[RMDB]
RNA sequence: GGGAACGACUCGAGUAGAGUCGAAAAGUGAGAACCCUCGCCGGGUUCGAGCAGAGCAGCUUGCUGCGAUGAACGGCCGCAGGCCGCCCCGAAGGGGUGAGCCACGCAGUGGCGAAUCAUCCCUCCCCAAGACAACAUUAUUCGUAAUGUUGUCUUGAAAAGAAACAACAACAACAAC
Reactivity to DMS in 0.01 (KOAc 150mM, MgCl2 10mM, bicine 150mM(pH8.5), 24C), signal-to-noise 9, nucleotides 027 to 126: g010u010g000a300g000a010a010c000c000c000u010c300g010c250c210g000g000g000u000u000c000g010a300g000c010a060g010a170g010c020a040g000c030u030u010g010c010u000g010c010g000a090u010g010a120a130c230g010g020c000c040g010c060a100g000g020c000c010g010c010c000c000c020g010a140a070g010g000g010g020u000g010a110g000c000c000a050c100g020c190a140g020u000g000g000c000g010a110a120u010c010a020u000c000c040c020u000c010c010c020
Reactivity to 2A3 in 0.01 (KOAc 150mM, MgCl2 10mM, bicine 150mM(pH8.5), 24C), signal-to-noise 9, nucleotides 027 to 126: g030u020g010a060g010a020a010c010c020c020u040c110g200c100c080g000g000g000u010u010c000g000a000g000c010a010g010a010g020c020a000g000c010u070u170g010c010u020g010c020g070a110u120g070a070a050c120g070g000c010c020g020c030a030g000g010c000c010g010c000c000c000c010g100a110a080g010g000g000g000u010g010a030g010c000c020a030c070g250c080a080g010u020g010g000c030g030a050a090u020c000a000u000c010c000c010u030c010c000c000